[RMDB]
RNA sequence: GGGAACGACUCGAGUAGAGUCGAAAAGUGAGGCUUGGGUUCUGCCUGGACCUCCAAAGCGUAGUAAAAGCCAGUAACCCGCUCUGAACAUCCCUUUUGGGUGCACUUGAGUCCAGUUUUGUGCAAAACGCUGCCUCUGGAUAUCCUUGGGGCUGUAAUACCCCAUACGAUUCGUCGUAUGGGGUAUAAAAGAAACAACAACAACAAC
Reactivity to 2A3 in 0.01 (KOAc 150mM, MgCl2 10mM, bicine 150mM(pH8.5), 24C), signal-to-noise 2, nucleotides 027 to 156: g100u110g010a020g020g090c090u120u100g070g030g020u070u000c030u120g050c040c000u000g010g020a090c020c010u080c030c040a070a090a060g080c100g060u130a010g070u060a180a050a020a080g000c000c040a030g040u080a050a050c050c020c000g010c020u010c010u070g050a060a040c000a050u050c000c010c040u030u070u150u170g040g000g000u060g020c040a020c150u070u110g050a020g030u030c030c010a040g000u000u040u110u160g050u040g000c030a020a090a020a020c110g030c070u050g000c020c000u000c010u000g020g010a110u090a080u300c050c050u060u080g010g010g040g000c010u050g000u000a040
Reactivity to DMS in 0.01 (KOAc 150mM, MgCl2 10mM, bicine 150mM(pH8.5), 24C), signal-to-noise 2, nucleotides 027 to 156: g020u000g020a060g030g060c010u010u000g020g010g030u000u000c120u000g010c040c030u000g010g010a030c140c030u000c020c030a070a060a110g030c070g020u010a110g010u020a060a070a140a130g040c000c010a110g020u000a100a110c010c060c060g000c010u000c010u010g020a120a090c020a090u000c030c010c120u000u010u000u000g030g000g030u000g010c040a060c070u000u000g030a110g010u000c010c040a070g000u010u000u010u010g010u010g010c060a090a060a060a130c080g000c060u000g020c010c010u000c010u010g000g020a110u010a060u010c010c040u000u000g020g000g020g010c030u000g000u010a160